Structure probing data (DMS and 2A3) for a 177-nucleotide construct. Conditions: 150 mM KOAc, 10 mM MgCl2 and 150 mM bicine (pH 8.5), 24 C. For DMS, 2,188 sequencing reads were counted. For DMS the reverse transcriptase was MarathonRT. 2A3 adducts were read by reverse transcription with SuperScript II with manganese. It was measured as part of the RMDB library OK2TST. Values cover nucleotides 27 to 126.
[RMDB]
RNA sequence: GGGAACGACUCGAGUAGAGUCGAAAAGAUCUCCAGGUUCUCGCUGCGCUUGGCCAGGGAGUCGACCAGGGUGAAGGCCAGCAGGUGAGGCAGGUGGCUGGUGGCCGCCAGAACCUCGUCGUGAUGACCUGGCUGAUUUAUUCGUAAAUCAGCCAGGAAAAGAAACAACAACAACAAC
Reactivity to DMS in 0.01 (KOAc 150mM, MgCl2 10mM, bicine 150mM(pH8.5), 24C), signal-to-noise 2, nucleotides 027 to 126: g000a120u010c030u010c020c030a140g000g040u000u000c030u010c060g000c020u000g000c180g010c030u000u000g020g010c010c030a100g010g010g000a090g010u010c140g010a090c040c030a100g000g010g010u010g000a110a120g000g000c020c030a030g020c070a120g000g000u000g010a060g000g000c120a090g000g020u000g010g000c010u000g010g000u010g030g010c000c030g010c010c010a050g010a120a130c010c010u000c110g000u010c010g000u000g000a160u010g000a160
Reactivity to 2A3 in 0.01 (KOAc 150mM, MgCl2 10mM, bicine 150mM(pH8.5), 24C), signal-to-noise 2, nucleotides 027 to 126: g040a080u050c020u020c080c000a000g100g020u060u000c020u000c040g070c050u070g000c030g030c140u130u180g060g000c000c020a000g050g040g010a040g070u060c040g110a140c000c040a100g090g010g010u110g090a140a050g050g020c040c010a000g000c000a020g000g000u010g000a020g020g000c050a050g030g030u020g000g000c020u070g130g170u250g170g040c000c000g030c020c000a020g040a030a040c000c010u020c060g060u030c020g050u080g060a070u070g040a030